An RNA of 177 nucleotides, treated with 2A3 and DMS and read out base by base.
2A3 adducts were read by reverse transcription with SuperScript II with manganese.
For 2A3, 5,919 sequencing reads were counted.
For DMS, 7,372 sequencing reads were counted.
[RMDB]
RNA sequence: GGGAACGACUCGAGUAGAGUCGAAAACUGCUGGCGAUGUGGAGAGGCAUUGAGCCCGCUGUACGCUUCGGCGACGUGUUAUGCGUAGGGUGUUAGGGAGUGGAACUAUGACCGCCGUCACGUAAGACCGGCUAUGUAGGUUCGCCUGCAUAGCCGGAAAAGAAACAACAACAACAAC
Reactivity to 2A3 in 0.01 (KOAc 150mM, MgCl2 10mM, bicine 150mM(pH8.5), 24C), signal-to-noise 6, nucleotides 027 to 126: c040u070g010c020u030g020g010c020g040a070u060g060u060g060g080a080g010a070g160g000c010a010u020u110g040a010g040c000c030c020g000c040u040g040u060a040c060g010c050u040u060c050g060g000c050g020a020c030g090u130g050u120u200a110u190g030c030g020u040a080g030g000g030u070g060u100u100a050g010g020g020a080g010u100g010g010a040a020c030u030a090u140g040a030c000c040g010c030c000g060u060c040a030c070g060u060a100a000g030a070
Reactivity to DMS in 0.01 (KOAc 150mM, MgCl2 10mM, bicine 150mM(pH8.5), 24C), signal-to-noise 4, nucleotides 027 to 126: c050u000g000c030u010g010g000c030g010a110u010g020u020g000g010a080g020a130g040g000c070a120u020u030g000a240g010c010c030c040g000c060u010g030u020a060c080g000c040u000u000c070g000g010c110g000a040c030g010u020g000u020u050a050u040g000c050g010u000a070g020g000g010u010g020u020u010a080g000g020g020a070g000u010g000g000a130a070c080u000a100u030g000a070c030c050g020c020c030g000u020c060a060c070g000u020a080a110g000a160